[RMDB]
RNA sequence: GGGAACGACUCGAGUAGAGUCGAAAAUGGAAUCAGACAUUAAUGACGGACUUUUUAUGACAUUAAGUUCAGGAGUCAUCAUUCCUCCUAACAGUUUUGAGAUUGUUUUAUUAAAAGAUGGUUUUCUUGGAAAUAGGGGGGAAAGACAUCUUAGAGAGUGAUACCCCAGAUUCGUCUGGGGUAUCACAAAAGAAACAACAACAACAAC
Reactivity to 2A3 in 0.01 (KOAc 150mM, MgCl2 10mM, bicine 150mM(pH8.5), 24C), signal-to-noise 1, nucleotides 027 to 156: u070g000g060a030a000u060c040a060g110a100c010a050u060u290a190a070u080g040a000c120g050g000a010c020u000u180u020u200u120a100u150g030a050c080a100u110u200a070a000g040u060u020c010a010g040g010a040g050u010c020a060u050c000a000u060u000c000c000u050c000c000u030a020a060c010a060g030u040u190u200u070g060a080g050a090u030u020g060u050u000u050u020a030u000u120a000a100a070a000g020a010u020g030g000u080u020u000u210c010u050u140g000g120a100a160a100u190a190g020g070g000g000g000g000a000a000a000g000a000c010a000u000c000u020u110a160g010a010g020a030

Conditions: 150 mM KOAc, 10 mM MgCl2 and 150 mM bicine (pH 8.5), 24 C. Chemical mapping of a 207-nucleotide RNA with 2A3. The 2A3 profile rests on 338 reads. Values are in units of 0.01, from 0 to 300, in steps of 10. Reactivities are given for positions 27 through 156. Source: RMDB library OK3TST, as collected in RNAgym.